[RMDB]
Chemical mapping of a 177-nucleotide RNA with 2A3 and DMS. Reactivities are rounded to 0.1 and cut off at 0 and 3. Values cover nucleotides 27 to 126. 2A3 is a SHAPE reagent: it acylates the 2'-hydroxyl of flexible nucleotides of all four kinds.
RNA sequence: GGGAACGACUCGAGUAGAGUCGAAAAAGGGGCAUCCGGGCUGGUACCCGGACUAUCUGCGUGAUCCCUGGUGACUUGAUACAGUCGCUGCACACGACUAUUUCAGGAUUGCUCUGGUGUCUUCGCCUAACUUAUUUACGUUCGCGUAAAUAAGUUAAAAAGAAACAACAACAACAAC
Reactivity to 2A3 in 0.01 (KOAc 150mM, MgCl2 10mM, bicine 150mM(pH8.5), 24C), signal-to-noise 8, nucleotides 027 to 126: a000g030g010g000g010c010a020u000c000c000g000g010g010c040u140g080g060u140a070c000c000c000g000g000a000c000u030a030u030c030u050g050c030g080u050g040a110u140c010c000c000u010g020g010u020g010a040c020u030u050g020a010u070a090c050a030g000u010c010g000c060u130g010c040a020c000a010c040g060a030c010u050a070u090u080u040c040a020g080g010a140u030u110g010c010u000c030u070g000g030u020g020u020c010u100u110c060g020c010c010
Reactivity to DMS in 0.01 (KOAc 150mM, MgCl2 10mM, bicine 150mM(pH8.5), 24C), signal-to-noise 9, nucleotides 027 to 126: a070g010g000g010g010c130a130u000c000c010g010g000g010c040u010g010g010u030a170c010c000c020g000g010a030c120u010a100u020c050u010g010c080g010u010g000a070u000c080c020c020u000g010g020u000g010a090c020u000u000g010a070u010a080c130a030g000u000c010g020c040u010g010c180a100c170a140c020g000a030c030u000a090u010u000u010c030a040g000g010a160u010u000g000c020u000c060u000g000g010u000g000u000c060u000u010c040g010c090c060